[RMDB]
RNA sequence: GGGAACGACUCGAGUAGAGUCGAAAAUUCUUCGACUCGGACCGGCUCAUCUCGACAAGAGGCGGCGAACCUCAGUACUCUUACUCUUUUCUGUAAAGAGGAGACUGCUGGUCCUGCCGCCCAAGUUCGAGCAUGAGCCAAUUCCGAGCGAAGGGAGCAGUAAGCAGACGUUCGCGUCUGCUUACUGAAAAGAAACAACAACAACAAC
Reactivity to 2A3 in 0.01 (KOAc 150mM, MgCl2 10mM, bicine 150mM(pH8.5), 24C), signal-to-noise 2, nucleotides 027 to 156: u090u020c030u060u000c020g110a170c010u010c000g000g000a000c020c030g010g010c000u000c000a000u010c000u000c000g000a000c040a030a080g110a240g080g000c000g010g000c000g020a040a000c000c010u030c000a030g020u190a290c020u010c030u060u150a290c000u010c020u000u220u120u110c200u200g270u300a030a030a030g000a000g060g000a020g010a000c000u000g130c010u010g000g000u010c000c020u040g040c010c000g000c000c000c000a020a020g000u060u010c000g000a000g010c010a010u000g000a000g000c010c000a000a000u000u000c000c000g010a000g000c000g020a000a000g000g020g000a010g110